An RNA of 170 nucleotides, treated with DMS and 2A3 and read out base by base.
[RMDB]
RNA sequence: GGGAACGACUCGAGUAGAGUCGAAAAUAGAACAGAGAAAUCACCUCCAGAGGACCCCUUCAGCGAACAGAGGCGCUCGCACGGGAUAGGAGUAAGACCAUAGCGAUAGGGAGAGAUGCUAGGAGUUUAAGUUCCGCGUUCGCGCGGAACAAAAGAAACAACAACAACAAC
Reactivity to DMS in 0.01 (KOAc 150mM, MgCl2 10mM, bicine 150mM(pH8.5), 24C), signal-to-noise 1, nucleotides 027 to 129: u000a080g010a000a000c050a120g040a090g010a060a100a050u050c050a070c090c020u040c040c060a100g040a010g000g090a070c300c040c010c090u000u000c130a240g010c110g050a000a040c100a050g000a000g010g020c000g020c030u010c030g000c120a100c130g070g050g010a000u070a010g060g000a080g100u030a030a080g040a080c060c040a060u030a050g010c070g020a050u020a060g000g000g030a050g040a020g020a000u020g040c090u060a000g020g000a140g060u000u020u100a060a120
Reactivity to 2A3 in 0.01 (KOAc 150mM, MgCl2 10mM, bicine 150mM(pH8.5), 24C), signal-to-noise 1, nucleotides 027 to 129: u160a060g160a090a000c070a030g060a000g030a040a090a040u050c000a090c000c000u050c060c000a000g020a040g010g020a030c000c000c000c000u060u090c050a010g010c030g090a030a010c010a220g020a020g000g050c080g000c000u100c020g010c000a010c030g020g000g070a040u070a020g040g040a000g000u080a080a020g000a000c040c030a060u100a030g020c030g000a010u040a040g030g050g000a020g010a000g020a000u060g000c000u050a000g080g000a010g000u090u210u000a050a050
For 2A3, 1,357 sequencing reads were counted.